[RMDB]
RNA sequence: GGGAACGACUCGAGUAGAGUCGAAAAGGCCUUGCCCGACUGAGAGUGCUCGCUGAAAGAGGCUGCGACGCGGGUUAUUCAGUUCGAUGCGCCCAGGCUGACGGUAGGACGCCUAACCCGAUUCAGACUUCCUGUUAUACUUCGGUAUAACAGGAAGAAAAGAAACAACAACAACAAC
Reactivity to DMS in 0.01 (KOAc 150mM, MgCl2 10mM, bicine 150mM(pH8.5), 24C), signal-to-noise 2, nucleotides 027 to 126: g000g010c040c000u010u020g000c000c010c030g000a030c000u020g000a090g000a090g050u000g000c000u010c010g000c020u000g000a040a080a130g010a130g000g010c010u000g000c020g030a120c200g000c010g000g000g020u000u000a040u000u000c000a010g000u010u000c120g040a010u040g050c030g000c020c010c010a050g000g030c110u020g010a080c300g000g010u010a030g000g000a070c170g010c020c020u000a090a130c000c000c000g000a120u010u000c120a050g000a300
Reactivity to 2A3 in 0.01 (KOAc 150mM, MgCl2 10mM, bicine 150mM(pH8.5), 24C), signal-to-noise 2, nucleotides 027 to 126: g010g000c000c010u010u040g010c000c000c000g060a080c000u040g020a040g020a030g220u030g000c000u010c010g000c010u010g030a020a070a020g130a070g160g000c000u010g060c020g120a090c150g010c040g020g090g000u040u000a020u050u000c010a020g050u100u190c070g030a060u180g030c000g010c000c010c000a000g000g000c120u050g010a010c010g010g010u020a020g020g020a050c140g010c020c000u010a040a040c010c000c010g020a090u090u100c030a020g040a130

Annotation:
Structure probing data (DMS and 2A3) for a 177-nucleotide construct. For DMS, 1,626 sequencing reads were counted. Source: RMDB library RFMREP, as collected in RNAgym.